Structure probing data (DMS and 2A3) for a 207-nucleotide construct. The RNA was probed in 150 mM KOAc, 10 mM MgCl2 and 150 mM bicine (pH 8.5) at 24 C. It was measured as part of the RMDB library M2RFPK. For 2A3, 2,445 sequencing reads were counted.
RNA sequence: GGGAACGACUCGAGUAGAGUCGAAAAGGUGCUCUGAAUCGAGUGCUCUACUGAGAUUAUAAAAUAGAAGGUAAGCUAUUAUCUCUUACAACAGGGCAGGGCUUGUUGGAAUAGGCGGUAAAGUCUAAAAACUACCUCACCUUCGGGUGAGGUAGAAGUAUAUGACGUUGUUCGCAACGUCAUAUACAAAAGAAACAACAACAACAAC
Reactivity to DMS in 0.01 (KOAc 150mM, MgCl2 10mM, bicine 150mM(pH8.5), 24C), signal-to-noise 1, nucleotides 027 to 156: g020g000u000g040c030u010c020u000g010a160a150u020c080g020a120g040u000g030c040u000c030u000a060c070u000g020a100g010a160u010u010a110u000a040a080a120a120u000a060g020a110a060g020g010u010a030a100g010c110u010a100u000u000a060u010c010u010c030u000u010a130c030a050a100c050a070g000g010g030c040a080g020g000g010c050u000u000g000u000u000g020g020a070a130u020a000g030g000c020g000g000u010a060a030a070g030u000c070u000a020a060a090a110a120c020u000a000c000c000u010c020a030c010c000u010u010c300g010g000g040u020g000a000g000g000u000a010g000a000a080
Reactivity to 2A3 in 0.01 (KOAc 150mM, MgCl2 10mM, bicine 150mM(pH8.5), 24C), signal-to-noise 4, nucleotides 027 to 156: g080g020u040g000c010u010c010u040g090a120a130u080c050g000a010g020u060g010c020u020c040u100a110c060u050g020a010g010a070u070u070a110u200a170a120a090a020u110a020g070a110a010g060g030u090a070a020g030c010u010a040u080u020a020u100c000u000c010u040u060a060c010a090a010c010a040g000g000g000c000a010g050g010g000c030u030u010g000u030u000g050g010a060a060u050a020g010g010c040g000g010u130a080a060a040g020u030c030u040a070a010a010a000a050c000u000a000c000c000u000c000a000c000c020u020u050c220g090g000g000u000g000a000g000g000u000a000g000a000a000